[RMDB]
RNA sequence: GGGAACGACUCGAGUAGAGUCGAAAAAGGACCCGAAAGAUGGUGAACUAUGCCUGGAUAGGGUGAAGUCAGAGGAAACUCUGAUGGAAGCUCGUAGCGGUUCUGACGUGCAAAUCGAUCGUAGAAUAGGACAACCUGUAUUCGUACAGGUUGUCCUAAAAGAAACAACAACAACAAC
Reactivity to 2A3 in 0.01 (KOAc 150mM, MgCl2 10mM, bicine 150mM(pH8.5), 24C), signal-to-noise 2, nucleotides 027 to 126: a000g190g000a120c080c000c000g040a110a090a050g050a080u130g000g000u050g000a010a090c080u130a060u170g000c020c000u020g010g050a140u130a240g120g050g000u300g030a020a000g010u010c000a000g010a000g010g000a030a000a090c000u000c000u000g000a000u000g000g030a000a040g010c010u050c030g060u030a000g100c050g070g000u010u000c030u080g060a050c020g030u040g090c050a000a010a070u030c040g080a020u000c000g000u140a090g070a150a200u070
Reactivity to DMS in 0.01 (KOAc 150mM, MgCl2 10mM, bicine 150mM(pH8.5), 24C), signal-to-noise 2, nucleotides 027 to 126: a000g010g020a030c020c000c020g020a090a140a160g000a080u090g020g000u010g000a120a110c140u000a080u000g000c050c020u000g010g020a130u020a050g010g030g000u010g000a160a180g000u000c000a000g030a000g000g000a190a050a160c000u000c000u010g010a000u000g000g000a190a110g000c000u010c000g010u000a090g010c170g000g010u010u010c000u010g000a150c090g000u000g060c030a000a150a060u000c010g000a090u030c100g020u020a020g000a090a100u040